[RMDB]
Annotation: This 177-nucleotide RNA was probed chemically with DMS and 2A3. The 2A3 profile rests on 732 reads. The RNA was probed in 150 mM KOAc, 10 mM MgCl2 and 150 mM bicine (pH 8.5) at 24 C. The DMS profile rests on 1,172 reads. For 2A3 the reverse transcriptase was SuperScript II with manganese.
RNA sequence: GGGAACGACUCGAGUAGAGUCGAAAAUUAAUCAGCGUAAGGGGAAGGUUAUAUCUUUGUUUGAUUUGAAAAUCACGGUGUUAAUAGAGGGACACGUGGACUCUAAGGACGGAUCGGCAUUGCCAUAACUGCCACUGCAUUUCGAUGCAGUGGCAGUAAAAGAAACAACAACAACAAC
Reactivity to DMS in 0.01 (KOAc 150mM, MgCl2 10mM, bicine 150mM(pH8.5), 24C), signal-to-noise 1, nucleotides 027 to 126: u100u010a120a160u000c050a080g000c070g060u000a020a040g000g010g000g030a000a000g000g040u000u000a030u040a110u000c050u000u040u000g050u000u000u080g010a230u020u000u060g000a070a000a090a010u000c000a140c000g020g000u050g020u000u000a030a040u070a130g040a150g000g000g010a070c250a000c000g020u040g000g000a120c040u030c000u000a020a090g020g070a110c080g000g010a130u060c000g000g040c030a000u010u070g010c070c080a010u000a120
Reactivity to 2A3 in 0.01 (KOAc 150mM, MgCl2 10mM, bicine 150mM(pH8.5), 24C), signal-to-noise 2, nucleotides 027 to 126: u100u070a000a100u110c060a000g110c010g200u140a170a130g000g000g010g000a000a000g070g000u240u050a100u000a030u080c010u020u050u080g200u000u030u090g080a150u060u060u090g100a070a030a000a000u000c000a000c020g060g010u100g020u090u050a080a060u280a030g090a090g070g020g000a000c000a000c000g000u000g010g070a020c050u010c060u060a120a000g050g000a050c030g000g060a070u020c010g000g040c000a070u000u020g000c010c010a010u050a050